This 207-nucleotide RNA was probed chemically with 2A3 and DMS.
[RMDB]
RNA sequence: GGGAACGACUCGAGUAGAGUCGAAAACGCUGGGUCACUGAAUGCUCUUUCGUUGAAAUGCUGAAGCGCGCACGGCAUGGAGAAAGUGCGCGUGACCUGUGCUGAAGCGCGCACGGCAACCGAAAGGUGCGAGUACUGUUGUCUUCGGACAACAGAAUCUCCUUAGAUCAUUCGUGAUCUAAGGAGAAAAAGAAACAACAACAACAAC
Reactivity to 2A3 in 0.01 (KOAc 150mM, MgCl2 10mM, bicine 150mM(pH8.5), 24C), signal-to-noise 3, nucleotides 027 to 156: c030g010c010u050g000g000g010u000c010a020c040u170g200a150a070u290g000c010u010c000u040u000u000c060g190u220u060g000a030a040a020u010g000c020u030g030a150a030g000c020g000c000g000c010a010c010g020g020c010a010u020g010g000a020g030a030a010a000g010u030g020c020g010c010g020u000g000a000c020c000u000g010u020g020c010u020g010a110a050g000c000g010c000g000c010a000c030g010g000c010a080a110c010c010g040a050a020a040g020g010u020g020c020g010a020g070u100a180c000u010g000u010u000g000u000c000u020u050c280g080g000a000c000a000a000c000a000g000a010a050
Reactivity to DMS in 0.01 (KOAc 150mM, MgCl2 10mM, bicine 150mM(pH8.5), 24C), signal-to-noise 2, nucleotides 027 to 156: c030g020c030u010g000g020g020u000c010a050c040u010g040a170a130u000g020c010u020c020u010u000u000c020g010u000u000g050a240a250a080u010g020c000u000g000a060a100g000c000g020c010g030c020a300c000g000g000c000a060u010g030g010a120g030a040a000a090g000u000g000c000g000c150g040u000g000a040c020c000u020g060u020g000c010u000g010a050a100g010c030g030c020g060c040a300c000g000g040c030a180a110c040c020g050a070a110a150g020g040u010g020c010g000a170g020u000a180c020u020g020u000u000g010u000c000u000u030c300g010g000a030c000a000a000c000a010g000a050a090
Source: RMDB library RNAMAK, as collected in RNAgym. DMS adducts were read by reverse transcription with MarathonRT.